The record gives the reactivity of an RNA of 177 nucleotides to DMS and 2A3.
RNA sequence: GGGAACGACUCGAGUAGAGUCGAAAAGAGCCAUUGCAGGAACAGAUAGACCGCCUCGGGAUGCUGCGACUGCGACGAGAUCCAGGCCGUGAUGUGGUAAUACAGAACCGACCGGCGGUUCAGCUGACUGACUCGUUCAAUUCGUUGAACGAGUCAGAAAAGAAACAACAACAACAAC
Reactivity to DMS in 0.01 (KOAc 150mM, MgCl2 10mM, bicine 150mM(pH8.5), 24C), signal-to-noise 2, nucleotides 027 to 126: g040a140g030c000c000a100u030u020g010c040a000g010g020a090a070c030a020g030a100u030a140g000a070c030c000g010c030c010u050c090g000g000g010a130u010g020c000u010g010c300g000a100c000u010g010c020g010a030c130g000a130g060a020u010c000c080a000g000g000c000c050g010u000g010a100u030g000u000g000g020u000a100a080u010a120c140a050g000a110a080c020c000g010a120c090c050g020g000c030g010g020u000u040c050a150g010c080u010g000a290
Reactivity to 2A3 in 0.01 (KOAc 150mM, MgCl2 10mM, bicine 150mM(pH8.5), 24C), signal-to-noise 2, nucleotides 027 to 126: g060a010g000c030c000a050u060u200g040c010a010g030g010a100a050c020a020g050a040u120a050g060a020c000c000g060c010c050u080c070g010g060g020a040u100g040c000u020g000c010g010a010c020u030g020c040g030a020c060g020a010g000a020u020c040c000a010g020g070c030c030g010u050g040a150u070g060u030g010g030u100a040a030u110a200c050a020g040a050a030c000c000g030a020c040c000g060g010c000g000g040u020u000c010a010g030c030u060g030a000
Conditions: 150 mM KOAc, 10 mM MgCl2 and 150 mM bicine (pH 8.5), 24 C.
For 2A3, 1,610 sequencing reads were counted.
High 2A3 reactivity points to a flexible backbone, as in loops and unpaired stretches.
For DMS the reverse transcriptase was MarathonRT.
Reactivities are given for positions 27 through 126.